[RMDB]
RNA sequence: GGGAACGACUCGAGUAGAGUCGAAAAAGAAGGUCGUAAUGUUCGAAACUAAGAUCAUCAUGGACGCGGACGAUAACAUCUUGGGGAUGCUCUUCCGUGACCGCAUAGGCACCUACAAGGUCAAUGUCUUCAUGGCCUUCCAGGACUGACCGUGCCCAUUGGAAUAUUGGUUCGCCAAUAUUCCAAUAAAAGAAACAACAACAACAAC
Reactivity to DMS in 0.01 (KOAc 150mM, MgCl2 10mM, bicine 150mM(pH8.5), 24C), signal-to-noise 4, nucleotides 027 to 156: a070g000a100a060g000g020u000c010g030u000a080a070u000g000u000u000c060g010a200a110a160c100u020a060a160g020a060u010c030a110u000c070a130u010g020g010a110c060g030c010g010g020a050c060g000a190u000a030a040c020a020u000c010u000u000g010g020g020g000a050u000g000c020u000c020u000u000c020c020g020u000g010a080c020c010g000c070a080u000a070g020g030c050a100c030c020u000a110c070a040a040g010g030u000c010a040a070u010g020u000c060u000u010c050a090u000g000g010c010c010u000u000c050c050a080g030g010a120c060u000g010a060c010c020g030u000g010c000c020c050
Reactivity to 2A3 in 0.01 (KOAc 150mM, MgCl2 10mM, bicine 150mM(pH8.5), 24C), signal-to-noise 9, nucleotides 027 to 156: a000g070a050a020g010g010u030c050g030u160a110a080u100g040u070u080c080g050a110a070a050c120u150a140a080g020a070u060c020a020u030c040a050u180g010g010a020c020g000c000g010g000a000c020g010a030u070a140a040c010a020u010c020u130u270g100g020g060g010a010u000g020c020u000c000u030u010c010c010g010u010g050a080c010c010g000c030a050u110a100g060g010c030a030c020c010u060a070c060a070a010g010g010u010c010a080a140u080g070u070c080u190u160c090a040u050g010g000c000c000u000u010c030c010a020g040g010a020c040u040g000a050c000c010g010u030g010c010c010c000
An RNA of 207 nucleotides, treated with DMS and 2A3 and read out base by base. High DMS reactivity at an A or C suggests that its Watson-Crick edge is free. DMS adducts were read by reverse transcription with MarathonRT. The RNA was probed in 150 mM KOAc, 10 mM MgCl2 and 150 mM bicine (pH 8.5) at 24 C. Source: RMDB library OK3TST, as collected in RNAgym. For 2A3 the reverse transcriptase was SuperScript II with manganese.